This 207-nucleotide RNA was probed chemically with 2A3. The RNA was probed in 150 mM KOAc, 10 mM MgCl2 and 150 mM bicine (pH 8.5) at 24 C. It was measured as part of the RMDB library RNAMAK. For 2A3, 904 sequencing reads were counted.
[RMDB]
RNA sequence: GGGAACGACUCGAGUAGAGUCGAAAAACCUUUGUGGUUCUAAGCUUGGAUUUAUGGGAUGUUUGGUACAGCCCAUUGGGCUGUACUGAUAUCCCAUUGUCAGCUUACGAACCACUCUGGUAAAACCGAAGGCGCAUGUUCGCAUGCGCCUUCGGAACAGAUUAACCAGCUUCGGCUGGUUAAUCUGAAAAGAAACAACAACAACAAC
Reactivity to 2A3 in 0.01 (KOAc 150mM, MgCl2 10mM, bicine 150mM(pH8.5), 24C), signal-to-noise 1, nucleotides 027 to 156: a000c010c000u010u020u000g000u000g010g020u000u000c000u020a010a000g000c000u150u270g150g000a110u300u300u100a000u140g000g010g000a010u000g080u090u240u260g030g010u000a000c000a000g010c030c010c110a300u030u300g010g010g000c000u000g010u010a000c000u000g010a000u010a000u020c020c000c000a000u000u000g020u000c010a000g000c000u000u010a050c140g000a000a000c000c000a000c000u000c000u010g000g000u070a080a080a040a100c000c000g000a010a000g000g000c010g000c060a000u010g040u080u160c210g000c150a000u000g030c000g000c050c000u000u000c000g000g000a000a000